Chemical mapping of a 207-nucleotide RNA with 2A3 and DMS. Values cover nucleotides 27 to 156. Values are in units of 0.01, from 0 to 300, in steps of 10. For DMS the reverse transcriptase was MarathonRT. Source: RMDB library OK3TST, as collected in RNAgym.
[RMDB]
RNA sequence: GGGAACGACUCGAGUAGAGUCGAAAAGUUGUCCAGCAAUGGGGCUUGUCCAAGAAGGUCUGCUUUAUGGAAUGAUGUGCAUGACUUUAAUCACCUCAGUCUACCUUCAUUCAUCCAUUCAACACGGGGUUAUUGUGCACCUACUACGUGCCAGGCACAUACACUAUCGGUUCGCCGAUAGUGUAUGAAAAGAAACAACAACAACAAC
Reactivity to 2A3 in 0.01 (KOAc 150mM, MgCl2 10mM, bicine 150mM(pH8.5), 24C), signal-to-noise 9, nucleotides 027 to 156: g050u060u050g060u070c030c020a020g020c060a050a130u090g000g020g020g000c030u060u060g040u020c030c020a040a050g080a040a010g040g020u030c040u050g060c040u150u150u130a080u160g070g020a040a030u040g020a020u030g110u120g090c140a070u100g030a050c000u080u090u130a100a080u160c080a080c040c040u090c060a010g010u000c010u020a040c010c000u020u040c010a030u030u040c000a050u020c050c010a050u090u130c050a080a060c030a050c110g050g010g000g000u070u050a100u080u140g060u090g010c010a030c010c020u090a100c040u060a040c080g020u020g020c020c010a030g040g000c030a000
Reactivity to DMS in 0.01 (KOAc 150mM, MgCl2 10mM, bicine 150mM(pH8.5), 24C), signal-to-noise 6, nucleotides 027 to 156: g030u010u000g020u000c010c030a100g010c090a120a150u000g000g010g010g010c020u020u000g010u000c040c040a090a160g010a100a110g000g020u010c020u010g010c040u000u000u000a100u010g020g020a090a060u010g010a040u000g010u000g040c020a070u000g010a050c030u000u000u000a070a130u010c080a080c070c070u000c110a070g020u000c010u000a050c010c010u000u000c030a060u000u000c040a160u010c030c030a120u000u010c040a040a070c070a050c060g000g000g020g010u000u000a070u000u000g010u000g010c050a070c040c010u010a090c060u000a080c050g020u000g000c020c070a080g010g030c050a200